[RMDB]
RNA sequence: GGGAACGACUCGAGUAGAGUCGAAAAGAUAUGGAGAGUAUCAAUUAAACUUUGAUCUCGGAAACGAGGGAGUUUGGGUUGAGUACUCUCCUAAGUCAAAAGUUAUCAAUGUUCGCAUUGAUAACAACUUCAUACCUUUCUUCGGAAAGGUAUGAAGAAAAGAAACAACAACAACAAC
Reactivity to 2A3 in 0.01 (KOAc 150mM, MgCl2 10mM, bicine 150mM(pH8.5), 24C), signal-to-noise 2, nucleotides 027 to 126: g020a000u030a010u120g010g000a010g000a000g000u000a000u080c000a020a000u060u040a050a010a010c030u210u150u170g130a140u160c000u020c030g030g000a070a050a020c010g000a000g010g060g000a030g000u020u030u100g300g010g000u030u010g010a050g160u040a010c000u010c010u020c010c000u000a000a020g010u000c020a040a040a090a150g000u000u000a010u010c000a000a010u010g050u030u080c270g000c140a000u010u000g000a000u010a000a000c000a000a000
Reactivity to DMS in 0.01 (KOAc 150mM, MgCl2 10mM, bicine 150mM(pH8.5), 24C), signal-to-noise 2, nucleotides 027 to 126: g030a040u010a300u010g000g020a030g010a020g000u000a020u000c000a000a010u000u010a040a000a010c000u000u000u010g020a080u010c010u000c000g010g000a100a070a190c010g010a010g000g000g000a010g010u000u000u000g000g020g020u000u010g010a090g000u000a010c000u010c000u010c000c000u000a030a040g000u000c030a100a080a130a110g010u000u000a000u000c010a000a020u000g010u010u030c210g040c000a000u000u000g020a000u000a000a000c010a090a170